[RMDB]
RNA sequence: GGGAACGACUCGAGUAGAGUCGAAAAUGUCCGUAGGCGGCGACGCGGUUGUAACGGCGUUCCCACUGCAAGUCGUCGAAGUGGAUGGCAGCGUGAAUCCGGUGGCCCUGGCUGCUGACGGUCACCAGGGUCAUCCAGUAUUCGUACUGGAUGACCCAAAAGAAACAACAACAACAAC
Reactivity to 2A3 in 0.01 (KOAc 150mM, MgCl2 10mM, bicine 150mM(pH8.5), 24C), signal-to-noise 1, nucleotides 027 to 126: u090g010u040c020c030g020u020a100g000g120c060g000g010c020g010a070c090g010c070g040g070u100u150g220u230a250a140c150g140g010c010g040u030u000c030c000c000a010c000u010g000c000a010a140g010u020c020g000u040c020g010a090a000g060u060g040g010a070u040g030g040c000a010g050c020g010u030g030a010a030u020c020c060g000g010u010g020g030c000c020c000u000g030g030c100u030g000c020u050g040a000c020g000g000u070c020a030c030c000a000
Reactivity to DMS in 0.01 (KOAc 150mM, MgCl2 10mM, bicine 150mM(pH8.5), 24C), signal-to-noise 2, nucleotides 027 to 126: u000g010u010c000c000g020u010a210g010g020c050g000g000c030g010a070c140g010c020g000g020u000u000g020u010a120a090c090g000g000c050g030u000u010c000c010c010a170c080u000g000c040a130a190g010u000c010g030u020c020g000a100a150g040u010g000g010a070u000g010g040c030a040g000c000g030u000g010a040a080u010c090c060g000g020u000g000g010c010c010c050u000g010g000c160u010g000c040u000g010a070c150g010g000u000c060a100c030c010a110
An RNA of 177 nucleotides, treated with 2A3 and DMS and read out base by base. For 2A3 the reverse transcriptase was SuperScript II with manganese. For DMS, 1,997 sequencing reads were counted. DMS adducts were read by reverse transcription with MarathonRT. The RNA was probed in 150 mM KOAc, 10 mM MgCl2 and 150 mM bicine (pH 8.5) at 24 C.